[RMDB]
RNA sequence: GGGAACGACUCGAGUAGAGUCGAAAAGAUAUGGAAGCGAUUACCGCUGGAACUACAGCCGCCCUUGCCAUCGGAAACGAUGGAACUACAAGUAACAAGCUGCCAGCGGUAAUCGCUUCCUAAGUCACUAACCAUCUAGCUUCGGCUAGAUGGUUAGAAAAGAAACAACAACAACAAC
Reactivity to DMS in 0.01 (KOAc 150mM, MgCl2 10mM, bicine 150mM(pH8.5), 24C), signal-to-noise 1, nucleotides 027 to 126: g010a030u020a300u010g000g020a010a000g000c000g000a040u020u000a000c010c010g000c010u030g050g040a070a040c050u010a300c000a000g000c010c040g000c300c260c000u000u000g000c000c010a000u010c000g000g000a120a080a300c030g020a000u000g000g000a020a020c050u000a300c010a000a050g010u000a020a220c140a240a180g000c000u000g000c000c000a000g000c000g000g000u000a000a000u000c000g000c000u000u000c000c000u000a020a020g000u000c050a290